The record gives the reactivity of an RNA of 177 nucleotides to 2A3 and DMS. Conditions: 150 mM KOAc, 10 mM MgCl2 and 150 mM bicine (pH 8.5), 24 C. As a SHAPE reagent, 2A3 marks flexible, mostly unpaired nucleotides at the ribose 2'-OH. 2A3 adducts were read by reverse transcription with SuperScript II with manganese. DMS (dimethyl sulfate) methylates the pairing face of unpaired adenines and cytosines.
RNA sequence: GGGAACGACUCGAGUAGAGUCGAAAAGCAAUAGAUCGUAAAAUUAUCGCUGAAAAAGUCUUGGGUACUGGGGAAAAGCCUGCCUACCACUUUACCCCUGAUGUUACGGCUGGCUAUCAUCCGGUGAUAUGCCAUCCAAAUUCGUUUGGAUGGCAUAAAAAGAAACAACAACAACAAC
Reactivity to 2A3 in 0.01 (KOAc 150mM, MgCl2 10mM, bicine 150mM(pH8.5), 24C), signal-to-noise 1, nucleotides 027 to 126: g030c010a060a000u050a080g070a020u130c050g110u180a070a110a200a110u140u060a080u120c060g000c060u070g030a120a000a040a010a040g050u000c040u080u050g070g000g030u060a030c030u020g020g000g000g040a000a040a050a060g000c000c000u020g030c010c000u020a070c010c040a030c020u160u190u260a150c030c010c030c010u010g010a040u050g040u020u020a040c070g000g000c010u030g010g070c000u000a010u080c060a040u030c010c000g000g000u020g010a000
Reactivity to DMS in 0.01 (KOAc 150mM, MgCl2 10mM, bicine 150mM(pH8.5), 24C), signal-to-noise 3, nucleotides 027 to 126: g030c030a050a050u010a040g000a050u000c130g010u010a090a080a110a120u000u000a030u000c050g020c020u010g000a090a080a100a090a090g010u000c020u000u010g040g010g020u000a010c070u000g000g010g040g010a060a080a060a130g000c000c000u000g030c010c020u000a150c210c100a030c020u010u000u010a290c040c020c020c090u000g020a060u010g010u000u010a070c150g010g000c020u010g010g010c020u000a090u010c060a080u010c000c040g010g040u010g000a090